[RMDB]
RNA sequence: GGGAACGACUCGAGUAGAGUCGAAAAUGAAGAAUUUGACUGCUGCUUAUAUAGCACAUCUGAAAGAAAAAAAUAGAUUUAGGCGCGAAAAUUCAUCAGAUAAGGAAUUCAUGUGAUCUUGAUGUCCUGCCAAAAACCCAAUAUAAAAGUGGCCUAACACUACUACGCUAUUCGUAGCGUAGUAGUGAAAAGAAACAACAACAACAAC
Reactivity to DMS in 0.01 (KOAc 150mM, MgCl2 10mM, bicine 150mM(pH8.5), 24C), signal-to-noise 2, nucleotides 027 to 156: u000g010a140a130g020a120a160u000u000u000g020a170c100u000g010c000u010g030c050u000u000a230u010a080u000a110g010c010a070c130a040u000c060u000g010a040a080a120g060a030a000a020a090a080a060a280u000a070g000a170u000u010u010a070g000g010c010g000c020g000a090a040a100a050u000u000c040a090u000c010a020g010a100u010a080a090g000g010a050a120u010u000c060a090u010g010u000g000a080u000c030u020u000g030a070u020g000u000c050c000u010g000c000c080a000a030a050a110a060c010c010c040a020a070u000a130u000a050a030a110a020g030u020g020g040c030c020u040a010a120
Reactivity to 2A3 in 0.01 (KOAc 150mM, MgCl2 10mM, bicine 150mM(pH8.5), 24C), signal-to-noise 3, nucleotides 027 to 156: u110g010a040a110g030a070a070u070u060u080g070a060c090u050g040c010u010g000c030u170u030a110u100a040u200a300g010c020a030c010a050u020c010u060g040a100a180a130g060a070a120a080a030a000a040a030u080a040g020a040u020u020u010a000g020g000c020g000c030g000a060a020a040a050u030u030c030a040u010c010a030g030a060u100a080a030g050g000a030a030u080u060c020a020u090g080u080g120a110u070c040u090u020g000a000u030g080u040c010c030u000g020c010c000a010a070a030a020a040c050c000c030a040a000u130a010u050a100a140a020a000g010u020g100g000c000c000u000a040a000

Chemical mapping of a 207-nucleotide RNA with DMS and 2A3.
For 2A3 the reverse transcriptase was SuperScript II with manganese.
For DMS the reverse transcriptase was MarathonRT.
The DMS profile rests on 2,577 reads.
The reactions ran in a buffer of 150 mM KOAc, 10 mM MgCl2 and 150 mM bicine (pH 8.5), at 24 C.
It was measured as part of the RMDB library OK3TST.